[RMDB]
RNA sequence: GGGAACGACUCGAGUAGAGUCGAAAAUCGAACCCAGGGGGAGUGUGAUCCAGGUACCGCCGUAGAAACUGGAUUACGACGUCUACCCGGGAUUCAAACCCGGUCCCCCUCAGAGGUGACUCUGAGUGAAAGGUCUGCGCUUAGCGCACUGAUGAGUGUUCAAAUUCAAGUUCGCUUGAAUUUGAACAAAAGAAACAACAACAACAAC
Reactivity to 2A3 in 0.01 (KOAc 150mM, MgCl2 10mM, bicine 150mM(pH8.5), 24C), signal-to-noise 1, nucleotides 027 to 156: u140c000g020a010a000c000c010c050a070g040g000g000g000g000a000g000u000g000u000g000a020u050c000c000a000g050g030u030a080c110c160g150c020c030g070u050a030g080a070a300a050c000u020g000g030a050u020u000a000c150g020a020c020g120u080c000u090a300c040c000c000g000g060g000a060u060u070c070a140a070a100c010c000c000g010g080u000c000c010c000c040c000u000c010a010g010a000g040g030u030g030a050c000u000c000u010g000a020g000u130g100a130a160a000g000g080u060c040u070g010c000g010c010u110u110a080g050c000g020c040a000c030u100g100a180u160g050a020g080u070